[RMDB]
RNA sequence: GGGAACGACUCGAGUAGAGUCGAAAAGAUAUGGAUAAGGCUUUUGACGGCUCGACCACUUCGGAAACGAAGUGGAGCCGAUAAGCCUAUCCUAAGUCAAAGGAUAAGCUCUUCGGAGCUUAUCCAAGAUCACAAUCCACUUCGGUGGAUUGUGAUCAAAAGAAACAACAACAACAAC
Reactivity to 2A3 in 0.01 (KOAc 150mM, MgCl2 10mM, bicine 150mM(pH8.5), 24C), signal-to-noise 1, nucleotides 027 to 126: g020a020u090a020u170g000g000a030u090a270a190g020g000c020u170u120u100u210g300a180c020g000g040c010u010c020g100a140c100c000a010c000u000u000c000g030g000a030a110a010c000g000a000a010g020u000g010g000a000g000c000c000g020a020u020a010a030g000c000c000u000a000u000c000c000u010a080a050g000u000c080a150a050a120g010g000a030u030a010a010g000c030u000c000u080u110c300g070g020a000g010c000u000u000a000u030c000c010a000a010
Reactivity to DMS in 0.01 (KOAc 150mM, MgCl2 10mM, bicine 150mM(pH8.5), 24C), signal-to-noise 1, nucleotides 027 to 126: g010a040u000a300u010g000g010a020u000a050a090g050g000c000u000u000u010u010g030a190c110g000g000c010u000c050g000a210c240c000a000c000u010u000c000g000g000a040a090a150c000g010a020a000g020u010g030g000a020g050c010c000g000a070u010a030a010g000c000c040u000a010u000c000c000u000a060a060g000u000c050a080a090a150g000g020a010u000a000a000g000c010u000c010u000u010c120g040g000a000g000c000u000u000a000u000c020c010a060a040

This 177-nucleotide RNA was probed chemically with 2A3 and DMS. The reactions ran in a buffer of 150 mM KOAc, 10 mM MgCl2 and 150 mM bicine (pH 8.5), at 24 C. 2A3 adducts were read by reverse transcription with SuperScript II with manganese. DMS adducts were read by reverse transcription with MarathonRT.